Chemical mapping of a 177-nucleotide RNA with 2A3 and DMS. The RNA was probed in 150 mM KOAc, 10 mM MgCl2 and 150 mM bicine (pH 8.5) at 24 C. 2A3 adducts were read by reverse transcription with SuperScript II with manganese.
[RMDB]
RNA sequence: GGGAACGACUCGAGUAGAGUCGAAAAGUUAACACCUUCGGGUGUUAACAAAUAAGGGAAGUCGAGUGCAAUAAGCACAGUCUACCCAAGACAAAACGACAAAAACAUCUCCCUUCGGGGAGAUGAACCAAUCCUAACACUUCGGUGUUAGGAUUGGAAAAGAAACAACAACAACAAC
Reactivity to 2A3 in 0.01 (KOAc 150mM, MgCl2 10mM, bicine 150mM(pH8.5), 24C), signal-to-noise 1, nucleotides 027 to 126: g000u000u000a020a000c000a000c000c000u010u090c240g050g000g010u020g000u000u000a000a000c000a000a000a000u170a040a020g070g040g040a090a120g020u010c020g060a070g010u020g010c040a120a290u250a300a040g020c020a000c010a000g000u000c010u010a060c010c000c000a000a010g020a000c020a030a060a050a030c050g030a030c010a010a170a000a010a000c000a010u000c000u000c000c000c000u000u100c170g040g010g000g020a000g000a000u000g000a000a020
Reactivity to DMS in 0.01 (KOAc 150mM, MgCl2 10mM, bicine 150mM(pH8.5), 24C), signal-to-noise 1, nucleotides 027 to 126: g000u020u010a000a000c000a010c010c000u010u010c280g030g000g000u000g010u030u000a000a000c000a070a040a080u000a070a130g030g000g000a220a040g000u020c020g000a090g070u000g000c000a170a070u000a060a230g000c000a000c010a160g010u000c000u000a080c000c000c000a160a010g000a020c070a050a100a300a210c000g000a020c050a050a000a040a150a130c040a020u000c040u000c000c000c000u000u000c160g060g030g000g010a000g000a000u010g000a010a080